[RMDB]
RNA sequence: GGGAACGACUCGAGUAGAGUCGAAAAGAUCUUUGACAGUUUUAGCUCCCAAGACCACUUUUGAUUUAGUCUUUGUUGACGUGGCACCCACAAUGGUCGAAACGUGAUACCUCGCUUAAGGGAUGUGCAAGUUACUGAACUUCGGUUCAGUAACUUGAAAAGAAACAACAACAACAAC
Reactivity to 2A3 in 0.01 (KOAc 150mM, MgCl2 10mM, bicine 150mM(pH8.5), 24C), signal-to-noise 5, nucleotides 027 to 126: g040a070u060c040u100u130u150g050a070c100a090g040u040u010u000u150a000g040c010u030c010c000c020a010a030g040a020c000c010a030c060u180u130u110u130g200a150u060u100u220a050g000u020c000u020u060u070g120u090u100g050a030c020g000u080g020g000c030a050c010c010c000a050c010a040a100u110g030g020u020c010g040a050a010a000c050g000u010g020a010u050a080c000c020u000c010g040c020u030u010a040a090g030g020g040a090u090g020u030g060
Reactivity to DMS in 0.01 (KOAc 150mM, MgCl2 10mM, bicine 150mM(pH8.5), 24C), signal-to-noise 4, nucleotides 027 to 126: g020a060u020c010u000u000u010g020a100c110a060g020u000u000u010u020a080g010c070u010c010c010c020a100a090g010a050c040c040a030c060u030u010u020u020g010a090u000u010u000a070g010u000c020u000u010u030g000u010u010g010a060c070g020u010g000g030c050a070c020c010c020a050c090a060a100u010g000g000u010c010g010a080a040a080c080g000u000g000a110u020a020c050c020u000c060g010c090u030u010a040a080g020g000g000a090u020g020u020g010